RNA sequence: GGGAACGACUCGAGUAGAGUCGAAAAGAUAUGGAACCACUGGCAAGGCCAGUCGGAAACGACGGCUGAUGACCCAGGGUUCCUAAGUCAAAAUCUCUGACGUAACCUUCGGGUUACGUCAGAGAAACAUCUUUACACGCUUCGGCGUGUAAAGAUGAAAAGAAACAACAACAACAAC
Reactivity to 2A3 in 0.01 (KOAc 150mM, MgCl2 10mM, bicine 150mM(pH8.5), 24C), signal-to-noise 1, nucleotides 027 to 126: g000a030u070a030u130g000g040a010a020c030c010a260c300u030g000g000c070a080a210g040g000c020c020a110g040u000c030g000g040a030a110a020c040g000a000c000g020g060c000u100g020a260u110g020a080c000c020c040a000g000g000g030u010u000c000c010u000a050a020g050u040c030a060a070a070a190u000c000u000c000u040g010a000c000g000u000a000a030c010c000u000u140c300g080g010g000u010u010a010c000g020u030c000a000g000a000g000a000a000a060
Reactivity to DMS in 0.01 (KOAc 150mM, MgCl2 10mM, bicine 150mM(pH8.5), 24C), signal-to-noise 2, nucleotides 027 to 126: g020a080u000a300u000g010g010a020a010c000c000a170c000u000g000g000c060a100a130g000g010c010c010a120g120u010c000g000g000a070a090a100c000g040a010c000g000g000c010u000g010a070u000g010a100c300c000c000a000g030g000g010u000u000c000c000u000a010a060g000u010c070a130a030a090a090u030c000u000c000u010g000a010c000g030u010a010a010c000c010u000u030c190g040g000g000u010u000a000c000g010u000c000a000g010a010g010a010a040a090